Chemical mapping of a 207-nucleotide RNA with 2A3. 2A3 adducts were read by reverse transcription with SuperScript II with manganese. Conditions: 150 mM KOAc, 10 mM MgCl2 and 150 mM bicine (pH 8.5), 24 C. Source: RMDB library M2RFPK, as collected in RNAgym. 2A3 is a SHAPE reagent: it acylates the 2'-hydroxyl of flexible nucleotides of all four kinds. Values are in units of 0.01, from 0 to 300, in steps of 10.
[RMDB]
RNA sequence: GGGAACGACUCGAGUAGAGUCGAAAAGUUCAUCCCCUGAUCAAGGAUGCCCGAAACGGUGAGGCGGCAAGCAAAUUAAAUAACGUCAACCCAUCGGGACGGUUGGCCAGUUAAGAAGUGAGGAUUCAAAAGAUCGAACCGUUCGCGGUUCGAUCAACUCAGAUCAGCAGUUCGCUGCUGAUCUGAGAAAAGAAACAACAACAACAAC
Reactivity to 2A3 in 0.01 (KOAc 150mM, MgCl2 10mM, bicine 150mM(pH8.5), 24C), signal-to-noise 1, nucleotides 027 to 156: g000u000u110c020a050u020c090c030c020c000u060g080a120u090c020a050a100g040g000a020u240g010c000c000c090g030a060a030a060c030g000g000u110g050a140g050g010c020g020g000c070a030a030g100c090a130a180a130u300u300a020a100a070u270a070a000c060g000u000c020a020a000c000c000c000a030u030c020g000g000g010a020c020g020g000u000u000g010g020c050c020a030g020u030u120a080a080g120a150a000g040u050g050a010g070g000a120u050u040c040a050a000a000a060g000a000u000c000g000a000a000c000c000g000u020u010c100g000c000g130g000u000u000c000g000a000u000c000a000a000